[RMDB]
RNA sequence: GGGAACGACUCGAGUAGAGUCGAAAAGAGACGGAGUCUUGCUCUGUCGCCCAGGCUGGAGGUCAGUGGCGCGAUCUCGGCUCACUGCAAGCUCCGCCUCUCGGGUUCACACCAUUCUCCUGCCUCAGAUUACCCUUCAAUUCGUUGAAGGGUAAUCAAAAGAAACAACAACAACAAC
Reactivity to 2A3 in 0.01 (KOAc 150mM, MgCl2 10mM, bicine 150mM(pH8.5), 24C), signal-to-noise 5, nucleotides 027 to 126: g010a000g010a010c020g000g010a010g020u100c030u100u080g030c010u020c050u060g140u110c060g020c020c010c000a010g030g000c020u190g180g010a020g010g070u070c020a020g000u020g020g010c030g000c020g080a070u010c040u020c060g040g010c040u040c040a070c020u050g000c020a030a050g020c000u000c000c010g010c010c000u000c010u010c030g060g020g000u120u140c050a030c000a020c050c010a020u060u000c020u030c010c030u110g020c010c010u050c020a030
Reactivity to DMS in 0.01 (KOAc 150mM, MgCl2 10mM, bicine 150mM(pH8.5), 24C), signal-to-noise 5, nucleotides 027 to 126: g000a090g010a020c020g000g010a030g000u010c110u000u010g010c000u000c030u000g020u000c090g010c020c010c020a120g000g010c030u010g010g010a030g010g010u010c020a040g020u000g010g000c040g010c300g010a030u010c030u000c040g000g000c020u000c030a030c030u010g010c040a050a040g000c020u010c010c020g020c010c010u000c030u000c070g010g000g000u000u000c140a050c100a090c040c030a180u000u000c010u000c020c120u000g010c020c020u000c080a110